[RMDB]
RNA sequence: GGGAACGACUCGAGUAGAGUCGAAAAGACUUGUCUACGCUCUUCAGACAAACAAGAAUCUCGCAUUCGGCAGAGGAAGUCUUUUUUCUAUCCUUGAUGGAAAAGAAAAUUCUGCCUAUGGUCACGAUGCAGGAAAGAGGUUGGUCGAGGGGGAUAAGUGAAUAUAUUUAUUCGUAAAUAUAUUCACAAAAGAAACAACAACAACAAC
Reactivity to 2A3 in 0.01 (KOAc 150mM, MgCl2 10mM, bicine 150mM(pH8.5), 24C), signal-to-noise 2, nucleotides 027 to 156: g030a020c020u060u070g020u080c020u050a080c090g050c070u070c030u130u160c050a030g010a020c030a020a150a020c040a080a040g090a090a070u010c030u030c110g040c030a070u130u110c070g000g010c010a000g020a020g060g060a040a050g070u010c000u040u040u000u010u020u010c010u030a030u000c060c090u060u180g050a040u080g010g020a040a020a020a010g000a010a070a040a050u050u010c000u000g000c000c000u080a100u080g040g020u060c030a020c120g040a030u120g020c050a000g060g020a040a060a030g060a040g050g000u050u070g040g030u050c010g020a030g000g000g000g000g010a020u040a240a040
Reactivity to DMS in 0.01 (KOAc 150mM, MgCl2 10mM, bicine 150mM(pH8.5), 24C), signal-to-noise 1, nucleotides 027 to 156: g010a160c010u000u030g000u000c020u010a140c060g020c000u000c030u010u000c050a140g040a100c000a040a100a100c050a050a100g000a100a260u000c020u010c040g000c050a160u010u020c060g010g000c000a040g010a040g020g020a070a050g020u000c010u000u000u000u010u000u000c020u010a200u000c000c140u000u030g030a150u010g020g000a040a030a010a160g010a050a030a020a170u000u020c000u000g030c040c000u000a060u000g000g010u010c060a110c030g000a060u000g010c060a040g000g000a040a080a150g010a110g000g020u020u000g010g030u010c040g000a090g030g030g020g000g030a030u000a030a210

The record gives the reactivity of an RNA of 207 nucleotides to 2A3 and DMS. DMS adducts were read by reverse transcription with MarathonRT. 2A3 adducts were read by reverse transcription with SuperScript II with manganese. Reactivities are rounded to 0.1 and cut off at 0 and 3.